This 207-nucleotide RNA was probed chemically with 2A3. 2A3 adducts were read by reverse transcription with SuperScript II with manganese. The RNA was probed in 150 mM KOAc, 10 mM MgCl2 and 150 mM bicine (pH 8.5) at 24 C. Source: RMDB library RNAMAK, as collected in RNAgym. For 2A3, 972 sequencing reads were counted.
RNA sequence: GGGAACGACUCGAGUAGAGUCGAAAAUUGGCGUUCGCGCCAAGAUCGUCCUAAGUCGAGAUGACCUACGGGAGUACGAUAAGUGUCGGAAACGACACUUUUGACGUACUUUGAUCGUAGGCAUCUCGAUAUGGAAAGCGCCGGGCUUCGGCCCGAAGAUGCCAAACCCAUUCGUGGGUUUGGCAUCAAAAGAAACAACAACAACAAC
Reactivity to 2A3 in 0.01 (KOAc 150mM, MgCl2 10mM, bicine 150mM(pH8.5), 24C), signal-to-noise 1, nucleotides 027 to 156: u020u000g010g000c010g060u080u030c200g010c000g000c130c010a000a010g030a070u250c180g000u020c010c000u020a130a000g020u000c000g000a000g020a000u070g300a300c010c000u000a000c000g000g000g010a000g000u000a000c000g000a040u000a040a000g020u000g000u000c010g090g000a070a030a050c030g000a010c000a000c010u010u000u000u040g100a030c010g000u010a010c000u010u000u050g100a090u120c010g000u000a000g000g000c000a000u000c020u010c000g000a000u020a000u000g000g020a030a080a130g080c060g010c060c060g010g020g000c000u130u070c150g090g040c000c000c060g010a030a120